[RMDB]
RNA sequence: GGGAACGACUCGAGUAGAGUCGAAAAGAUAUGGACUUACUACCCACCCUCACGGCAGGCAUCGAUCAAGUAAGCUCGGAAACGAGCUUACUUGGGAGCCUGAAGUGAGGAGGUAAGUCCUAAGUCACCAAUUCAAUUAGUUCGCUAAUUGAAUUGGAAAAGAAACAACAACAACAAC
Reactivity to DMS in 0.01 (KOAc 150mM, MgCl2 10mM, bicine 150mM(pH8.5), 24C), signal-to-noise 5, nucleotides 027 to 126: g000a130u000a140u000g010g000a010c000u000u010a010c010u000a140c040c020c060a300c110c010c000u010c000a010c000g010g030c020a010g010g010c000a300u010c240g000a110u020c000a010a010g010u000a000a010g000c010u000c000g020g000a070a080a250c010g000a010g010c010u000u000a000c000u000u000g000g000g000a030g010c000c000u000g000a000a020g010u000g000a010g000g000a020g010g010u000a010a000g010u000c010c000u000a020a120g000u000c140a220
Reactivity to 2A3 in 0.01 (KOAc 150mM, MgCl2 10mM, bicine 150mM(pH8.5), 24C), signal-to-noise 4, nucleotides 027 to 126: g120a060u270a280u300g000g010a000c000u050u000a000c010u210a250c030c010c020a040c010c030c000u000c000a010c010g050g040c020a000g000g000c030a300u300c230g190a160u120c050a010a000g020u000a000a000g000c010u000c000g020g050a060a100a080c010g000a000g000c000u000u000a010c000u000u010g000g000g000a010g000c000c000u000g000a020a000g010u000g000a010g020g000a000g000g000u000a010a000g000u020c010c000u010a040a020g080u030c050a020